[RMDB]
RNA sequence: GGGAACGACUCGAGUAGAGUCGAAAAGUGGUGAUGAUUCUUUGAUGUACUCCAACAAACCGAUCGCUAAUUACGCAGAAUCGAUUUGCGUGGAAACUGGUUUUGAGACGAAGUUCUUGUCACCAAGUCAUACACCAGGCUUCGGCCUGGUGUAUGAAAAAGAAACAACAACAACAAC
Reactivity to 2A3 in 0.01 (KOAc 150mM, MgCl2 10mM, bicine 150mM(pH8.5), 24C), signal-to-noise 2, nucleotides 027 to 126: g130u050g000g010u010g010a010u000g010a010u150u000c000u020u100u000g070a100u150g070u100a090c040u000c010c000a020a050c010a020a080a000c010c000g010a010u070c020g000c070u050a120a190u180u100a070c100g000c040a070g070a110a040u120c010g040a020u000u000u060g050c130g010u020g020g000a010a050a060c060u060g040g070u120u060u140u230g180a100g000a010c020g030a020a020g010u070u010c040u030u050g000u010c010a000c030c000a000a020g040
Reactivity to DMS in 0.01 (KOAc 150mM, MgCl2 10mM, bicine 150mM(pH8.5), 24C), signal-to-noise 2, nucleotides 027 to 126: g000u000g010g030u000g000a010u010g020a030u000u000c010u000u000u000g020a170u020g010u000a090c200u000c010c080a100a050c060a000a000a000c010c000g000a020u000c040g030c010u000a130a190u010u000a080c180g010c040a110g000a080a080u000c020g010a070u000u000u000g010c050g020u000g000g010a030a070a070c040u000g000g000u000u010u010u010g000a140g000a090c050g010a030a020g000u020u000c170u010u000g000u000c000a020c000c000a020a130g010